[RMDB]
RNA sequence: GGGAACGACUCGAGUAGAGUCGAAAAACGCGGCGACGUUGGCCGCGGCGUCUCGGUAGUCGGCCAGCGCCGACAGCGCGCCGUAUUUCCAGUCCGCCUGUUUGGCCGCCAGCGCGUCGUAAUAGGCGCCAUCAUCCUCAUUCGUGAGGAUGAUGGCAAAAGAAACAACAACAACAAC
Reactivity to DMS in 0.01 (KOAc 150mM, MgCl2 10mM, bicine 150mM(pH8.5), 24C), signal-to-noise 3, nucleotides 027 to 126: a080c110g030c000g010g000c000g000a090c030g070u020u000g020g020c120c140g020c020g000g020c030g020u010c050u010c100g000g000u000a100g010u000c090g000g020c000c080a140g020c140g010c000c010g000a070c070a080g000c110g000c010g040c010c010g010u000a090u000u000u000c050c050a150g030u000c160c050g000c010c010u010g010u000u010u010g020g020c070c100g010c060c010a080g010c080g020c050g030u000c010g030u000a090a090u000a100g010g000c100
Reactivity to 2A3 in 0.01 (KOAc 150mM, MgCl2 10mM, bicine 150mM(pH8.5), 24C), signal-to-noise 2, nucleotides 027 to 126: a000c060g030c010g000g000c020g030a220c020g170u040u020g030g010c090c030g060c030g020g020c000g030u030c030u020c100g060g080u270a220g030u060c020g080g000c020c040a150g020c040g000c030c010g010a020c040a030g050c010g010c000g000c020c010g030u060a070u060u070u010c040c000a000g010u100c020c010g010c000c010u150g150u180u180u230g080g030c020c010g000c010c000a020g030c030g000c030g010u030c020g000u000a040a030u060a180g150g000c030